Chemical mapping of a 177-nucleotide RNA with 2A3 and DMS. The RNA was probed in 150 mM KOAc, 10 mM MgCl2 and 150 mM bicine (pH 8.5) at 24 C. Source: RMDB library OK2TRN, as collected in RNAgym. Values cover nucleotides 27 to 126.
RNA sequence: GGGAACGACUCGAGUAGAGUCGAAAACUUGUUUGAUUUAGAUGCUCCAUUUCCUAUCAGUGGGGUAUGUGGAAACAGCACUGUGCUGGGAGAAGGAUACUUGGGUUCUGUCCUAUGUAUGAAUCACCCUAUGUGGUUACUUCGGUAACCACAUAGGAAAAGAAACAACAACAACAAC
Reactivity to 2A3 in 0.01 (KOAc 150mM, MgCl2 10mM, bicine 150mM(pH8.5), 24C), signal-to-noise 3, nucleotides 027 to 126: c030u080u160g080u130u180u120g110a120u090u060u120a080g030a050u050g000c010u020c020c000a030u020u090u080c020c020u130a090u180c050a040g000u020g030g080g000g040u050a060u050g080u020g070g090a130a120a000c010a010g060c040a030c120u130g090u100g190c080u060g020g000g040a080g010a070a020g050g040a000u010a080c030u070u090g080g000g000u070u180c050u120g090u070c000c000u060a100u080g060u010a120u140g130a070a040u130c010a090c020
Reactivity to DMS in 0.01 (KOAc 150mM, MgCl2 10mM, bicine 150mM(pH8.5), 24C), signal-to-noise 4, nucleotides 027 to 126: c050u000u010g020u000u010u010g010a090u010u000u000a100g000a100u000g000c070u000c010c010a070u000u000u000c040c050u010a140u010c070a060g030u000g010g010g010g030u000a030u000g020u000g010g010a080a100a120c050a040g000c050a090c130u010g010u010g020c040u000g020g000g000a080g000a070a060g000g010a080u000a010c040u000u000g000g000g000u000u000c120u010g000u000c000c030u000a040u000g010u010a070u000g010a080a110u010c060a120c160